[RMDB]
RNA sequence: GGGAACGACUCGAGUAGAGUCGAAAAGGUCCUAUGGCAUCUACUCUGCAAAGCAUCCUUAUGGCCGCCACCAAACGCAACUGCAACGUCACGCAGAUGAGAGAGCUCCCUACCAUGGACUCAGCGGAUGUUAUUCGCCUUUCGAGGCGAAUAACAUAAAAGAAACAACAACAACAAC
Reactivity to DMS in 0.01 (KOAc 150mM, MgCl2 10mM, bicine 150mM(pH8.5), 24C), signal-to-noise 1, nucleotides 027 to 126: g020g000u010c020c050u000a070u000g000g000c060a100u010c000u000a060c050u040c010u000g010c080a080a120a100g000c020a070u000c040c070u010u000a080u000g010g010c020c050g020c030c010a090c080c180a020a050a140c120g010c060a070a030c060u000g000c000a100a080c140g000u010c160a100c050g020c050a090g020a050u020g000a110g020a150g000a140g020c060u000c010c020c050u000a120c120c060a040u000g020g000a100c060u000c090a060g030c110g000g000